[RMDB]
RNA sequence: GGGAACGACUCGAGUAGAGUCGAAAAGAGAUCCCACUUGAGGAAUGAUACCGAUGUGGUAAAUUUUGUGAGUAUGGAAUUCUCUCUUACUGAUCCGAGGCUGGAGCCACACAAGUGGGAAAAGUACUGUGUCCUUGAGAUAGGAGACAUGCUCCUCCCUAGGUGUUUGGUUCGCCAAACACCUAGGAAAAGAAACAACAACAACAAC
Reactivity to 2A3 in 0.01 (KOAc 150mM, MgCl2 10mM, bicine 150mM(pH8.5), 24C), signal-to-noise 1, nucleotides 027 to 156: g040a000g000a090u050c020c000c000a010c000u070u070g010a070g010g020a240a170u160g110a070u140a140c020c040g010a050u110g030u040g040g040u070a120a100a280u130u170u070u140g050u030g010a010g010u120a130u180g070g080a060a120u260u000c020u000c000u020c010u090u070a020c030u180g020a090u030c010c000g050a070g020g040c070u080g090g040a040g020c010c000a010c000a000c000a010a010g010u060g000g000g000a010a090a000a000g000u050a050c160u010g000u000g010u020c010c000u000u000g010a030g010a060u130a000g010g000a000g010a010c010a010u050g000c030u030c040c010u000c000
Structure probing data (2A3) for a 207-nucleotide construct.
As a SHAPE reagent, 2A3 marks flexible, mostly unpaired nucleotides at the ribose 2'-OH.
It was measured as part of the RMDB library OK3TST.